Description: The record gives the reactivity of an RNA of 177 nucleotides to DMS. DMS adducts were read by reverse transcription with MarathonRT.

RNA sequence: GGGAACGACUCGAGUAGAGUCGAAAAUUCAAUGCUGGAGUUACUGGUCGCUACGUUAUCCAGACGUGUAUCGUACUGAAUCCCGCCACGCAAUCCCCAACGCUCGGAGAUACGCCAGUAAGUAUCGAUUUUGUUUCCGUUUCGACGGAAACAAAAUAAAAGAAACAACAACAACAAC
Reactivity to DMS in 0.01 (KOAc 150mM, MgCl2 10mM, bicine 150mM(pH8.5), 24C), signal-to-noise 2, nucleotides 027 to 126: u010u010c060a070a090u010g000c030u000g030g010a130g020u000u010a060c050u000g000g010u000c080g000c080u000a030c040g030u010u010a090u030c090c080a060g010a050c060g030u000g010u010a040u010c040g010u000a070c040u010g010a090a120u000c040c040c020g000c060c040a030c180g000c050a120a100u000c010c010c000c090a050a070c170g040c080u010c080g020g020a120g000a070u000a040c040g010c020c010a060g000u000a030a120g010u000a020u000c070g000